[RMDB]
RNA sequence: GGGAACGACUCGAGUAGAGUCGAAAAAUCGCGCGCGUACCGAUGCGCAUGUCAGUGACAGCGCGAGUACUGCGCUCGAGCAGCAUGCGAUAGUACAGAGAGUACAUACGGCCAGUGGUACUCAGCGCACAUCCGUCGUAUUCGUACGACGGAUGUGAAAAGAAACAACAACAACAAC
Reactivity to 2A3 in 0.01 (KOAc 150mM, MgCl2 10mM, bicine 150mM(pH8.5), 24C), signal-to-noise 4, nucleotides 027 to 126: a000u100c060g000c000g000c010g000c020g000u010a010c030c050g080a120u300g040c000g000c010a040u020g020u010c130a110g040u010g120a040c010a010g000c000g000c000g030a030g060u100a090c110u180g000c000g000c010u010c000g000a020g000c030a010g030c010a020u040g000c000g050a060u040a050g030u020a040c030a000g140a000g010a010g200u000a000c020a070u140a030c030g160g100c150c100a070g000u030g010g000u010a010c000u020c040a030g010c010g010
Reactivity to DMS in 0.01 (KOAc 150mM, MgCl2 10mM, bicine 150mM(pH8.5), 24C), signal-to-noise 5, nucleotides 027 to 126: a120u000c050g000c070g010c020g030c130g010u000a010c020c060g010a090u010g000c000g010c000a010u000g000u000c060a140g020u010g000a300c300a040g000c000g030c010g000a200g030u010a070c170u010g020c010g020c000u000c010g000a240g000c040a140g000c020a020u000g010c010g000a050u000a110g000u000a010c040a210g000a150g000a020g010u000a010c000a060u010a050c050g010g000c180c160a160g020u000g030g000u000a010c010u010c010a140g000c050g050